[RMDB]
RNA sequence: GGGAACGACUCGAGUAGAGUCGAAAACUACAACAAGUGGAAAAAGGCUAUCGAAGGCAGGGGCAAAGGGUCAAGAAGGAGAUGGCCGUACAACUCUGGCAGAUUUGGGGAGAACAAAUACAUCAAAAGAUGAGAUCAGGAACAAGAUGGUGUCAACGUUACUUAGCUUAUUCGUAAGCUAAGUAACAAAAGAAACAACAACAACAAC
Reactivity to DMS in 0.01 (KOAc 150mM, MgCl2 10mM, bicine 150mM(pH8.5), 24C), signal-to-noise 2, nucleotides 027 to 156: c050u010a180c060a070a080c070a070a130g010u010g000g010a060a040a150a130a090g030g000c020u000a110u010c060g010a090a060g000g000c020a070g060g010g010g050c060a050a030a030g050g030g010u010c030a050a060g030a100a060g000g000a110g000a090u010g000g020c010c000g010u000a050c020a060a080c070u000c030u000g000g000c080a080g010a170u000u000u000g030g020g010g000a090g040a040a120c050a020a050a140u000a080c050a080u000c030a050a080a060a110g020a050u000g000a090g010a050u000c030a090g000g020a070a060c060a030a120g010a080u000g020g030u010g000u000c040a050a090c150
Reactivity to 2A3 in 0.01 (KOAc 150mM, MgCl2 10mM, bicine 150mM(pH8.5), 24C), signal-to-noise 6, nucleotides 027 to 156: c030u130a030c020a090a010c020a120a060g060u080g040g080a050a020a030a060a030g050g000c040u060a040u120c090g050a030a020g020g000c030a020g040g000g010g000c060a070a070a030g050g010g010u040c030a050a020g030a040a020g070g020a040g010a020u050g030g000c000c000g020u050a030c030a080a020c010u020c040u080g020g000c020a020g030a160u050u070u120g030g000g000g000a040g010a020a020c020a020a050a010u210a050c030a030u080c050a050a120a060a060g030a010u060g010a010g000a050u040c010a020g040g010a030a010c020a060a030g020a020u040g000g040u020g030u040c020a030a020c080